[RMDB]
RNA sequence: GGGAACGACUCGAGUAGAGUCGAAAAGUCUUACAACACGAUGAUGUUACCCCAUAAUGACCUGAGAGGUAUGAGGCGAUACCCGUAUUGAUUGUUGAGCGAAGCCGGCUUGCCGGUGGAGUGAUGCCACCCGUCAUCUCUUCGGAGAUGACGGGUGAAAAGAAACAACAACAACAAC
Reactivity to DMS in 0.01 (KOAc 150mM, MgCl2 10mM, bicine 150mM(pH8.5), 24C), signal-to-noise 1, nucleotides 027 to 126: g000u000c040u000u040a010c200a200a050c190a210c080g080a020u070g040a200u000g010u000u000a070c000c000c000c090a180u020a190a030u000g000a000c090c080u000g000a220g000a030g000g080u000a000u000g000a200g000g000c080g070a080u000a090c000c000c000g000u120a060u000u000g080a090u040u080g000u000u000g020a300g000c000g000a300a270g000c040c000g000g000c000u010u000g110c000c130g040g000u000g000g000a210g000u000g000a050u000g000c000
The record gives the reactivity of an RNA of 177 nucleotides to DMS. The reactions ran in a buffer of 150 mM KOAc, 10 mM MgCl2 and 150 mM bicine (pH 8.5), at 24 C. DMS adducts were read by reverse transcription with MarathonRT. Source: RMDB library RFM100, as collected in RNAgym. Values cover nucleotides 27 to 126.